[RMDB]
RNA sequence: GGGAACGACUCGAGUAGAGUCGAAAAGUCAGUGGGUCGGGUGGGUCGAGACUCUCGUAUGUACUCUGGUGUCUGAGUGUAAUUAACGCCAUCAUGGUAACAAUCAACGAAAGACGGACCUAAGGUCCUCUGAGUCGAGAUUCGUCUCGACUCAGAGAAAAGAAACAACAACAACAAC
Reactivity to 2A3 in 0.01 (KOAc 150mM, MgCl2 10mM, bicine 150mM(pH8.5), 24C), signal-to-noise 5, nucleotides 027 to 126: g140u090c110a030g020u050g030g040g090u130c150g070g030g200u220g030g030g000u040c060g040a050g030a080c010u010c000u020c050g060u120a100u160g050u020a030c020u000c020u020g000g040u050g030u030c070u070g050a060g080u070g050u100a080a090u200u090a090a000c050g030c010c000a030u050c010a040u120g000g000u030a050a050c050a080a090u180c080a020a020c050g040a030a040a020g080a020c070g000g010a000c000c000u070a110a060g030g010u000c000
Reactivity to DMS in 0.01 (KOAc 150mM, MgCl2 10mM, bicine 150mM(pH8.5), 24C), signal-to-noise 4, nucleotides 027 to 126: g000u020c120a090g000u000g020g000g010u050c140g000g000g010u010g010g010g030u010c040g020a040g000a020c020u000c050u000c040g000u030a060u010g000u010a050c050u000c060u050g020g010u020g000u010c070u010g010a170g010u020g020u030a080a070u030u040a090a110c130g020c040c000a030u020c070a050u010g000g010u010a030a080c120a080a070u020c100a110a070c030g000a050a080a090g000a080c130g000g010a030c010c000u010a070a130g010g000u010c020